Notes:
Structure probing data (2A3 and DMS) for a 177-nucleotide construct. For 2A3, 4,642 sequencing reads were counted. DMS adducts were read by reverse transcription with MarathonRT. The RNA was probed in 150 mM KOAc, 10 mM MgCl2 and 150 mM bicine (pH 8.5) at 24 C. High DMS reactivity at an A or C suggests that its Watson-Crick edge is free. It was measured as part of the RMDB library TTRDES.
[RMDB]
RNA sequence: GGGAACGACUCGAGUAGAGUCGAAAAGAUAUGGAGAUAUGGAGCGCGAUAAGACCGUGUCGGAAACGACACAGGUCUUUUGACGCGUGACAUAUCUCCUAAGUCAAAACUGGUGUUCGCACCAGAAGAAUCAUCGUAUCUUCGGAUACGAUGAUUCAAAAGAAACAACAACAACAAC
Reactivity to 2A3 in 0.01 (KOAc 150mM, MgCl2 10mM, bicine 150mM(pH8.5), 24C), signal-to-noise 2, nucleotides 027 to 126: g010a000u080a050u170g000g000a030g000a010u000a000u020g050g000a070g000c020g000c020g080a060u020a140a000g000a010c000c010g000u000g000u010c010g030g000a060a060a030c010g030a000c010a010c020a030g040g000u020c000u030u010u000u020g080a040c030g000c020g040u010g000a000c000a000u020a010u000c010u010c000c020u000a010a010g010u010c010a000a000a080a140c010u000g010g000u000g100u090u110c300g000c120a000c000c020a000g020a020a050
Reactivity to DMS in 0.01 (KOAc 150mM, MgCl2 10mM, bicine 150mM(pH8.5), 24C), signal-to-noise 3, nucleotides 027 to 126: g000a050u000a300u010g000g010a000g030a010u000a000u000g000g010a300g000c000g000c000g000a150u030a020a000g000a010c000c000g040u000g010u000c010g020g000a120a080a210c030g000a000c000a010c040a070g070g010u000c000u000u000u000u000g010a150c050g000c000g050u020g010a270c000a010u000a020u000c000u000c000c010u000a010a050g000u010c020a110a080a140a220c000u000g000g020u000g020u000u020c220g030c010a010c010c000a010g000a060a080